[RMDB]
RNA sequence: GGGAACGACUCGAGUAGAGUCGAAAAGAAAAUCCCGGUCCCGUCAGACAAAUCAGUGACAUGAUGGUCAUAGCGAAAGCACACGCACGAAAUGUCACUGAUGAAAAAGUGCGUCUGACCAAAAAAACCUAUUUUCAAGAUUCGUCUUGAAAAUAGGAAAAGAAACAACAACAACAAC
Reactivity to DMS in 0.01 (KOAc 150mM, MgCl2 10mM, bicine 150mM(pH8.5), 24C), signal-to-noise 3, nucleotides 027 to 126: g010a080a140a170a140u010c010c000c010g000g000u010c010c040c010g020u010c030a010g000a020c020a100a150a030u010c000a010g000u000g010a010c000a000u010g000a260u000g020g010u000c030a120u000a110g020c010g020a110a080a160g000c010a070c220a090c180g010c020a020c030g000a060a110a000u010g000u000c010a000c010u000g010a030u000g000a030a090a070a080a060g000u000g020c210g000u000c020u000g010a040c000c080a010a010a030a050a000a060a120
Reactivity to 2A3 in 0.01 (KOAc 150mM, MgCl2 10mM, bicine 150mM(pH8.5), 24C), signal-to-noise 2, nucleotides 027 to 126: g020a000a130a010a040u020c000c030c000g010g060u030c000c010c000g000u000c010a010g000a010c000a020a180a010u020c010a010g010u000g010a000c000a020u040g020a050u120g020g070u110c030a080u180a040g000c010g090a140a030a030g000c010a030c000a000c150g040c000a040c050g020a110a110a000u000g020u000c000a000c010u010g000a000u010g000a020a030a030a000a000g090u050g050c060g000u000c010u010g010a000c000c000a010a120a000a010a020a050a060